[RMDB]
RNA sequence: GGGAACGACUCGAGUAGAGUCGAAAAAUGCAGUGCCCCAUACUGGCGGAAGGCAAAAUGAACUAUAUUACAGACGAUCCCUCCUACACCCAUAUGAGCUCGUUAAUGAGAACUGGAGGUAGAGCUCUACCCCUGGGCAUUUCGAUGCCCAGGGGUAAAAAGAAACAACAACAACAAC
Reactivity to DMS in 0.01 (KOAc 150mM, MgCl2 10mM, bicine 150mM(pH8.5), 24C), signal-to-noise 1, nucleotides 027 to 126: a130u000g000c090a050g000u080g080c000c010c000c030a130u020a170c050u110g030g010c020g020g000a060a080g050g020c000a040a000a290a140u000g000a030a050c050u000a070u150a110u030u000a180c140a290g000a030c050g000a050u000c080c030c000u010c030c000u000a160c140a060c000c000c020a020u080a130u100g000a020g000c000u000c000g000u210u000a010a020u000g030a060g000a020a020c060u000g000g000a020g000g000u000a260g000a080g000c050u000c010
Reactivity to 2A3 in 0.01 (KOAc 150mM, MgCl2 10mM, bicine 150mM(pH8.5), 24C), signal-to-noise 2, nucleotides 027 to 126: a000u080g000c000a010g080u000g000c010c000c010c000a140u150a100c000u040g000g050c000g000g000a060a000g190g130c040a000a000a000a110u250g140a000a000c110u000a040u040a040u300u170a130c070a020g190a030c100g000a010u060c000c000c000u000c000c000u020a060c000a300c000c000c000a080u060a140u120g000a000g000c080u020c000g030u020u190a200a160u160g060a050g060a170a040c120u020g110g000a070g000g000u010a010g000a000g000c000u010c000